[RMDB]
RNA sequence: GGGAACGACUCGAGUAGAGUCGAAAAACUGGGUUCGCCCAGUAAAAAACCUUUGUGGUACAGGGAGAAUAAUGGGUGGUGGACCCAUUGGGUCCACGUAACAUCCCAUUAAUUCGACGAUCUGUACCACUCUGGUAAAAAGUGGCUUCGGCCACAACAACCAUCGUUUAUUCGUAAACGAUGGUUGAAAAGAAACAACAACAACAAC
Reactivity to 2A3 in 0.01 (KOAc 150mM, MgCl2 10mM, bicine 150mM(pH8.5), 24C), signal-to-noise 2, nucleotides 027 to 156: a000c020u030g020g010g020u050u040c180g100c020c000c040a030g010u070a040a060a010a010a000a000c020c000u030u000u000g000u000g000g000u000a000c000a000g000g000g010a000g020a000a000u000a020a000u000g010g010g000u020g000g010u010g000g010a010c030c030c030a080u100u220g010g000g000u000c000c020a000c000g000u010a010a000c010a150u140c000c000c000a000u000u010a050a130u000u000c010g060a030c000g000a010u000c010u000g000u000a000c000c000a010c000u000c000u000g000g000u010a040a110a040a040a100g010u000g010g000c000u040u100c250g090g000c000c000a000c000a000a020
Reactivity to DMS in 0.01 (KOAc 150mM, MgCl2 10mM, bicine 150mM(pH8.5), 24C), signal-to-noise 1, nucleotides 027 to 156: a050c010u020g020g020g020u000u000c300g040c010c010c000a000g000u000a000a030a090a110a030a000c000c000u000u000u010g020u000g000g000u000a010c000a030g000g010g000a100g000a040a050u000a030a020u000g000g020g070u020g000g000u000g000g010a020c000c000c000a220u030u020g020g050g010u000c000c010a020c010g010u000a030a040c040a130u000c000c000c000a040u000u000a030a090u000u000c010g040a130c120g030a040u000c020u000g000u000a010c010c000a000c010u000c010u000g030g000u010a010a070a110a180a110g020u000g010g010c020u000u010c220g010g000c000c000a010c020a050a110
An RNA of 207 nucleotides, treated with 2A3 and DMS and read out base by base. DMS adducts were read by reverse transcription with MarathonRT. The reactions ran in a buffer of 150 mM KOAc, 10 mM MgCl2 and 150 mM bicine (pH 8.5), at 24 C. High 2A3 reactivity points to a flexible backbone, as in loops and unpaired stretches. Reactivities are given for positions 27 through 156. For 2A3 the reverse transcriptase was SuperScript II with manganese.